[RMDB]
RNA sequence: GGGAACGACUCGAGUAGAGUCGAAAAGUAUGUAUGGGUGAAUAUAUGUUUGCAUGAGUGUACAUAUACGUACACUUAUACAAGGCGGGAAUGUAAGCAAAAAUAUGCUCAAUGUUUGCAAAUAGUCCCACGUAAAUCGUUUCGACGAUUUACGUGGAAAAGAAACAACAACAACAAC
Reactivity to 2A3 in 0.01 (KOAc 150mM, MgCl2 10mM, bicine 150mM(pH8.5), 24C), signal-to-noise 3, nucleotides 027 to 126: g090u130a130u230g120u030a080u090g000g040g000u070g090a220a030u080a040u030a060u090g010u040u020u060g020c040a030u070g020a020g040u080g000u000a000c040a040u240a060u030a270c060g000u000a020c050a000c000u000u000a000u000a010c030a000a020g120g000c110g060g020g050a150a020u040g030u130a020a010g010c030a030a050a110a080a000u260a020u160g010c030u040c050a060a130u100g010u020u010u060g010c020a030a030a060u060a030g070u060c020
Reactivity to DMS in 0.01 (KOAc 150mM, MgCl2 10mM, bicine 150mM(pH8.5), 24C), signal-to-noise 2, nucleotides 027 to 126: g010u000a080u040g030u010a090u030g000g000g020u000g000a060a100u010a020u010a020u050g010u000u010u010g010c020a090u020g000a010g000u000g020u000a020c000a170u080a180u070a140c170g060u000a000c090a000c000u000u010a000u000a050c030a000a040g000g000c020g000g020g000a080a010u020g000u020a050a060g030c000a000a070a040a040a080u050a040u020g010c020u000c130a050a080u010g020u000u000u000g000c050a040a040a050u020a050g070u020c080

Source information: The record gives the reactivity of an RNA of 177 nucleotides to 2A3 and DMS. 2A3 adducts were read by reverse transcription with SuperScript II with manganese. Source: RMDB library OK1LIB, as collected in RNAgym. DMS adducts were read by reverse transcription with MarathonRT. Reactivities are given for positions 27 through 126. The 2A3 profile rests on 1,661 reads. Conditions: 150 mM KOAc, 10 mM MgCl2 and 150 mM bicine (pH 8.5), 24 C.